[RMDB]
RNA sequence: GGGAACGACUCGAGUAGAGUCGAAAAGAUAUGGACCAGGGUGUGUUUGAUGACCUCGGAAACGAGCAAGAACCCACCUGGUCCUAAGUCAAAGUCUAACAUCCUUGUUCGCAAGGAUGUUAGACAAUCCAGAAAACUAGUUCGCUAGUUUUCUGGAAAAAGAAACAACAACAACAAC
Reactivity to DMS in 0.01 (KOAc 150mM, MgCl2 10mM, bicine 150mM(pH8.5), 24C), signal-to-noise 4, nucleotides 027 to 126: g000a050u010a300u010g000g000a020c010c000a000g020g000g010u000g010u000g000u000u000u000g010a100u010g010a080c300c010u000c000g000g010a120a100a190c010g010a020g000c030a050a130g000a010a020c000c050c020a030c000c000u000g000g000u030c000c010u000a000a050g010u010c030a080a110a140g000u000c000u000a000a000c000a000u000c000c000u000u000g000u000u020c220g010c010a010a000g010g000a000u000g000u000u000a000g000a000c010a020a050
Reactivity to 2A3 in 0.01 (KOAc 150mM, MgCl2 10mM, bicine 150mM(pH8.5), 24C), signal-to-noise 4, nucleotides 027 to 126: g030a020u070a040u130g010g000a000c010c010a020g100g290g040u060g000u010g030u020u010u040g280a300u120g050a080c020c010u000c000g010g010a050a080a010c000g010a000g020c020a110a200g010a010a000c010c050c000a010c010c000u000g000g000u000c000c000u010a070a000g010u010c060a110a080a010g000u000c000u000a000a000c000a000u010c000c010u000u000g040u080u090c290g020c200a000a000g000g000a000u000g000u000u000a000g000a000c000a010a010